[RMDB]
RNA sequence: GGGAACGACUCGAGUAGAGUCGAAAACUGGCGUCGUCCGGCUCCCUCGACCGCACCGGAGCGCUAGAAAAGGUCCUCGGACUUUCUUCUAUCUCCGAAGCCGGUUUGGGGCCCGGCGAAACGCGGGCCUGUCUCCUAAGAUGCCUCCGCUAGUCGAGUUUAGACAUAUCUUCGGAUAUGUCUAAACAAAAGAAACAACAACAACAAC
Reactivity to 2A3 in 0.01 (KOAc 150mM, MgCl2 10mM, bicine 150mM(pH8.5), 24C), signal-to-noise 1, nucleotides 027 to 156: c020u060g080g010c000g000u020c010g050u080c010c050g020g000c120u300c020c010c050u050c090g020a000c000c010g040c010a050c150c050g000g000a000g000c020g080c040u000a020g000a000a000a000a000g050g020u040c040c020u130c230g160g000a010c000u030u010u090c090u020u000c050u110a300u300c000u160c090c000g000a000a000g030c040c060g000g000u000u030u180g000g020g030g000c020c000c050g030g000c020g020a090a000a000c050g000c060g010g000g050c010c010u040g040u020c070u060c040c040u080a130a040g030a110u030g020c000c000u030c080c010g010c100u090a050g160u130c060g040a070